[RMDB]
RNA sequence: GGGAACGACUCGAGUAGAGUCGAAAAGCUGGGUGACCCAUUGUAAAGGUGGGUCCGAUCCACGUCUUGUCGCAAAUCAACAAGAAAUUGAUUAGCCUGUACGAUGGUUGGGCCUUCGCUUCGCGGGUCAAGGGACGGUGUUCGCGCCGUUCCUUGAAAAAGAAACAACAACAACAAC
Reactivity to DMS in 0.01 (KOAc 150mM, MgCl2 10mM, bicine 150mM(pH8.5), 24C), signal-to-noise 9, nucleotides 027 to 126: g010c050u000g010g010g010u010g000a030c010c000c000a130u030u020g020u030a060a040a040g000g010u000g000g010g010u000c000c010g010a010u030c000c020a060c030g000u000c010u010u010g010u030c130g020c070a080a040a020u000c010a010a030c090a120a160g020a070a140a200u000u000g000a010u000u000a100g010c000c020u000g000u030a020c010g010a110u010g010g010u000u010g000g000g010c000c000u000u000c030g000c020u000u000c070g010c080g000g000g010
Reactivity to 2A3 in 0.01 (KOAc 150mM, MgCl2 10mM, bicine 150mM(pH8.5), 24C), signal-to-noise 9, nucleotides 027 to 126: g060c050u070g020g060g060u100g040a040c010c010c030a080u080u220g090u170a080a050a040g020g010u010g000g000g000u000c000c000g010a010u010c010c010a010c010g010u000c020u050u090g150u210c060g000c050a020a040a020u010c000a000a040c030a140a070g140a220a120a060u020u020g010a010u010u010a020g010c010c010u030g040u110a010c010g100a240u020g010g000u000u020g000g000g000c000c000u000u010c030g040c120u030u030c040g010c050g030g010g010